[RMDB]
RNA sequence: GGGAACGACUCGAGUAGAGUCGAAAAGGUUCUACCGCACGUCCCCACGUGAGGAUGCGCCUCUGCCGUCUACCCCGCAAUAUGCGACUAUGGUGGAAGCGUGAAUCACGUGGAUAGCCGCUCACAUUAGAUAUCCUCGAUUCGUCGAGGAUAUCUAAAAAGAAACAACAACAACAAC
Reactivity to 2A3 in 0.01 (KOAc 150mM, MgCl2 10mM, bicine 150mM(pH8.5), 24C), signal-to-noise 6, nucleotides 027 to 126: g000g010u010u000c000u020a040c010c000g050c020a030c030g050u040c000c010c000c010a000c000g000u000g000a010g030g020a050u140g000c000g000c000c010u000c010u010g010c000c010g020u010c050u120a170c040c040c020c000g000c010a090a170u210a180u300g010c000g020a020c020u050a050u150g000g020u020g000g010a010a000g000c000g010u060g010a000a030u000c000a000c000g000u000g000g010a020u100a030g060c040c040g070c050u050c030a110c000a140u010
Reactivity to DMS in 0.01 (KOAc 150mM, MgCl2 10mM, bicine 150mM(pH8.5), 24C), signal-to-noise 3, nucleotides 027 to 126: g000g010u010u030c000u010a070c000c020g060c280a090c070g010u020c030c070c020c040a050c000g010u000g000a000g000g000a210u010g010c000g000c000c000u000c010u010g000c000c040g000u010c190u010a080c190c130c110c000g000c010a170a220u040a160u000g010c000g000a070c150u030a050u010g030g000u010g000g020a000a040g020c010g030u000g020a300a250u000c000a040c000g040u000g020g010a080u000a020g000c030c030g010c040u000c030a050c110a100u000